Chemical mapping of a 177-nucleotide RNA with 2A3 and DMS.
The reactions ran in a buffer of 150 mM KOAc, 10 mM MgCl2 and 150 mM bicine (pH 8.5), at 24 C.
RNA sequence: GGGAACGACUCGAGUAGAGUCGAAAAAACUCAUGGUAGGACCUGAGAGGAGCCGAUGUUCCGUCGUACGUUUUGAAAAACGAGCCAGGGAGUGUGCCUGUUUGACGAGUCUAACCGGAGUAUCCGGUGUAGGGAGGCUUUUCGAAGCCUCCCUACAAAAAGAAACAACAACAACAAC
Reactivity to 2A3 in 0.01 (KOAc 150mM, MgCl2 10mM, bicine 150mM(pH8.5), 24C), signal-to-noise 1, nucleotides 027 to 126: a000a010c030u050c020a050u060g030g020u020a130g070g030a000c000c000u070g040a000g030a030g180g030a050g010c000c020g060a090u150g050u100u000c000c010g100u070c000g000u060a000c060g000u000u010u040u240g160a070a060a000a000a000c030g020a000g010c000c000a140g000g010g000a010g000u120g030u000g060c040c000u110g150u020u010u100g070a060c040g000a000g090u050c060u020a010a020c000c000g000g000a030g080u120a070u020c050c000g000g000
Reactivity to DMS in 0.01 (KOAc 150mM, MgCl2 10mM, bicine 150mM(pH8.5), 24C), signal-to-noise 2, nucleotides 027 to 126: a050a070c040u020c000a060u030g000g020u000a100g000g000a270c020c010u000g000a150g030a140g030g000a100g000c040c080g050a080u020g000u030u010c010c020g010u020c160g030u000a080c040g000u020u020u000u000g010a030a040a080a000a040c080g000a210g020c060c030a030g010g050g000a030g000u000g000u030g020c020c020u000g000u040u000u020g000a160c060g010a070g010u000c060u000a090a060c000c000g000g000a130g020u020a150u000c000c000g000g000